RNA sequence: GGGAACGACUCGAGUAGAGUCGAAAAUUACACUGAGAGCAUUUAGCCUGAUUACUCUUUAAAUCAAAUCAGGCAAUAGACAGAAACUCGAGAGGUGAAAACCCCACAGCAUUCUGAAAUGUAUUUGAAGGCAACGCUACCUUCGGGUAGCGUUGAAACAUGCUAUAACGUUCGCGUUAUAGCAUGUAAAAGAAACAACAACAACAAC
Reactivity to DMS in 0.01 (KOAc 150mM, MgCl2 10mM, bicine 150mM(pH8.5), 24C), signal-to-noise 2, nucleotides 027 to 156: u000u000a080c080a190c160u030g000a020g010a040g030c030a300u020u010u000a080g000c000c000u000g020a070u000u000a140c050u000c020u000u010u010a040a050a040u000c080a090a120a100u000c010a040g020g020c000a110a030u000a210g000a130c020a080g000a200a190a050c030u000c030g020a040g030a050g000g030u000g030a110a080a130a080c040c000c000c000a160c080a010g040c040a090u010u000c050u000g000a050a030a100u010g000u000a100u000u010u020g010a060a080g010g010c000a030a030c010g000c020u000a010c020c000u000u000c250g000g030g000u000a000g010c000g000u000u010g000a090a110
Reactivity to 2A3 in 0.01 (KOAc 150mM, MgCl2 10mM, bicine 150mM(pH8.5), 24C), signal-to-noise 3, nucleotides 027 to 156: u110u030a070c070a030c090u130g040a010g000a000g080c040a040u030u050u040a030g000c000c000u000g010a020u000u050a090c020u010c050u120u300u200a090a120a090u190c110a020a010a050u000c010a000g000g020c000a000a000u030a010g040a010c020a000g180a070a100a020c020u030c050g050a050g020a060g070g010u040g000a070a010a030a030c020c020c050c000a040c050a040g030c000a050u060u070c010u140g020a120a130a090u080g010u060a210u090u150u190g060a070a040g080g000c010a000a000c000g000c000u000a000c010c000u020u040c080g010g000g000u000a000g010c000g000u000u000g000a000a000